[RMDB]
RNA sequence: GGGAACGACUCGAGUAGAGUCGAAAACGAAGUGAUAAGUGAUGUCGCCGAUCAGACGAACCUGCUGGCGUUGAACGCGAACAUAGAGGCAGCACAGGCUGGUGAGCACGGUGACGGGUUCGAGGUCACUCCAUGCUGGUUUCGACCAGCAUGGAGUAAAAGAAACAACAACAACAAC
Reactivity to DMS in 0.01 (KOAc 150mM, MgCl2 10mM, bicine 150mM(pH8.5), 24C), signal-to-noise 3, nucleotides 027 to 126: c090g000a060a100g000u000g000a050u010a060a130g010u060g010a130u010g010u030c000g030c020c020g020a040u020c050a030g020a030c100g050a040a200c280c000u000g010c050u000g000g000c000g000u000u020g000a250a170c020g010c000g010a160a060c200a130u010a110g030a130g040g010c100a040g000c010a090c130a140g020g030c010u000g000g000u030g000a080g000c140a230c050g000g050u020g010a030c020g000g000g020u000u000c010g000a120g000g020u000c020
Reactivity to 2A3 in 0.01 (KOAc 150mM, MgCl2 10mM, bicine 150mM(pH8.5), 24C), signal-to-noise 2, nucleotides 027 to 126: c060g040a070a000g080u120g190a140u070a240a100g100u050g060a110u060g000u010c000g000c020c000g000a040u060c020a050g080a100c000g010a020a040c000c000u000g030c010u000g100g000c010g020u040u190g100a150a060c070g030c040g010a050a030c040a040u190a020g100a100g130g000c000a020g000c000a010c010a050g100g050c000u010g020g030u080g020a060g050c030a040c040g000g000u020g000a020c020g010g000g000u070u100c100g030a090g000g100u060c000
Description:
Chemical mapping of a 177-nucleotide RNA with DMS and 2A3. For 2A3 the reverse transcriptase was SuperScript II with manganese. For DMS the reverse transcriptase was MarathonRT. The reactions ran in a buffer of 150 mM KOAc, 10 mM MgCl2 and 150 mM bicine (pH 8.5), at 24 C.